[RMDB]
RNA sequence: GGGAACGACUCGAGUAGAGUCGAAAAGAAAAUUAAUCAGCCAGACGGAUUAAUGGAUGACAGACUGAGCCGCAGGGAGAAGAUGAUACGGAAGAACAAAUACAUAAGAUGAAUAAUCAAGUCGAAAGGAUAGGUGAGUAUUCGUGUUCACCUAUCCAAAAGAAACAACAACAACAAC
Reactivity to 2A3 in 0.01 (KOAc 150mM, MgCl2 10mM, bicine 150mM(pH8.5), 24C), signal-to-noise 9, nucleotides 027 to 126: g040a000a040a000a000u070u090a020a020u030c020a010g110c060c020a030g040a060c040g070g000a020u030u060a060a030u060g050g040a040u070g030a030c020a030g060a020c030u060g020a000g040c010c010g030c040a030g010g030g030a060g020a040a030g050a030u070g010a020u050a090c030g010g030a020a020g030a070a030c040a020a080a020u130a050c060a040u170a080a050g060a080u120g050a070a050u160a100a040u130c070a060a020g100u060c030g110a120a050a000
Reactivity to DMS in 0.01 (KOAc 150mM, MgCl2 10mM, bicine 150mM(pH8.5), 24C), signal-to-noise 9, nucleotides 027 to 126: g010a080a080a070a070u010u010a040a050u010c030a090g010c020c050a060g010a110c090g010g010a050u010u010a040a030u020g000g010a100u000g010a080c070a070g010a060c080u010g000a080g010c050c020g000c070a090g010g000g000a060g020a080a050g010a050u010g000a050u020a050c080g000g000a060a060g010a080a070c110a030a050a080u030a090c160a070u030a070a100g010a050u010g000a070a040u030a070a070u010c030a060a090g010u010c040g000a080a100a090

An RNA of 177 nucleotides, treated with 2A3 and DMS and read out base by base. For 2A3, 21,407 sequencing reads were counted. Conditions: 150 mM KOAc, 10 mM MgCl2 and 150 mM bicine (pH 8.5), 24 C.